[RMDB]
The record gives the reactivity of an RNA of 177 nucleotides to DMS and 2A3.
High DMS reactivity at an A or C suggests that its Watson-Crick edge is free.
RNA sequence: GGGAACGACUCGAGUAGAGUCGAAAAGCGCUUAACGCCGAAGCCAUCGGCAACGCGCUGGCGGAUUACGGCGUCGUUGCCGUGCCCAAUUCCUUUUUUCGAUAGGCGGGCUUUCCGCAUGUAGACGCGGUAUUGACACUUUCGAGUGUCAAUACCGAAAAGAAACAACAACAACAAC
Reactivity to DMS in 0.01 (KOAc 150mM, MgCl2 10mM, bicine 150mM(pH8.5), 24C), signal-to-noise 3, nucleotides 027 to 126: g020c110g020c070u000u000a080a130c130g020c000c020g010a050a090g020c070c100a190u000c000g000g000c010a020a070c120g010c030g000c000u010g020g060c200g000g010a110u020u030a070c040g010g000c000g000u020c080g020u000u010g000c000c020g020u010g000c020c010c020a090a120u010u000c020c020u000u000u000u000u000u000c090g000a050u020a100g010g020c070g000g000g010c180u000u010u010c010c030g000c070a070u010g020u000a070g010a110c300g000
Reactivity to 2A3 in 0.01 (KOAc 150mM, MgCl2 10mM, bicine 150mM(pH8.5), 24C), signal-to-noise 2, nucleotides 027 to 126: g030c030g000c040u070u090a100a050c060g040c030c020g030a050a010g080c040c030a090u050c030g000g000c020a010a010c000g000c000g000c000u000g020g000c130g040g090a090u150u200a070c000g000g010c000g000u160c030g030u120u090g010c000c030g020u010g000c000c020c000a020a060u100u080c030c020u150u190u110u030u030u170c060g040a070u060a080g020g060c000g020g010g000c000u060u130u030c020c000g050c040a080u160g070u150a040g010a140c060g020
2A3 adducts were read by reverse transcription with SuperScript II with manganese. Source: RMDB library OK2TST, as collected in RNAgym.